[RMDB]
RNA sequence: GGGAACGACUCGAGUAGAGUCGAAAAGGCAAGCCGCUGCUCGAUGAAUCAUGGGAUGGCGGUUACGGGGUCAUCCAGUCAAAAGUGAAGGCCGGCUCGCCGAAUUGGGACGUGGUUCAGGUCGAGAUAGCUGCUAUCAGUUCGCUGAUAGCAGCUAAAAAGAAACAACAACAACAAC
Reactivity to DMS in 0.01 (KOAc 150mM, MgCl2 10mM, bicine 150mM(pH8.5), 24C), signal-to-noise 1, nucleotides 027 to 126: g000g000c010a080a050g000c000c010g020c140u000g010c000u030c020g000a210u000g000a110a050u010c150a110u010g010g010g020a030u000g000g010c010g000g000u000u000a050c120g030g000g000g000u010c000a000u020c000c000a130g010u000c070a030a070a090a130g010u000g030a110a130g060g010c060c050g000g000c000u000c080g000c010c020g000a080a210u000u000g000g020g020a070c080g020u030g000g010u000u000c060a070g030g020u020c030g000a070g000a170